[RMDB]
RNA sequence: GGGAACGACUCGAGUAGAGUCGAAAACCUGGAAGUAGCGCAUACUUUAGGCUGAUUGAAAGUGCAGACCGCGUCACAGGAGGAAGAUAAGCCGAUAAUCCAGAUAGAACAGAGAGGUUAUCAUACGGAAUAGGAAUGGUGUCAGACGAGAUUGAUAGCCAUCAGCGUGAUUCGUCACGCUGAUGGCAAAAGAAACAACAACAACAAC
Reactivity to 2A3 in 0.01 (KOAc 150mM, MgCl2 10mM, bicine 150mM(pH8.5), 24C), signal-to-noise 1, nucleotides 027 to 156: c000c000u000g020g020a000a040g010u090a000g000c150g000c010a000u000a090c010u000u020u210a170g020g000c010u050g060a280u100u170g120a120a060a000g000u000g000c040a030g030a190c030c130g000c040g050u090c000a010c000a030g030g030a000g010g010a060a060g000a000u160a070a000g070c000c000g000a000u160a110a090u010c000c000a030g000a220u030a000g080a150a000c080a030g040a000g020a020g070g000u020u020a000u100c010a000u010a130c060g060g020a060a000u080a240g000g070a080a030u060g020g000u000g000u030c060a000g020a000c080g000a040g010a000u040u050g030a030u250a050
This 207-nucleotide RNA was probed chemically with 2A3. The data come from the RNA Mapping Database (RMDB), library OK3TST. For 2A3, 348 sequencing reads were counted. Conditions: 150 mM KOAc, 10 mM MgCl2 and 150 mM bicine (pH 8.5), 24 C. Values cover nucleotides 27 to 156.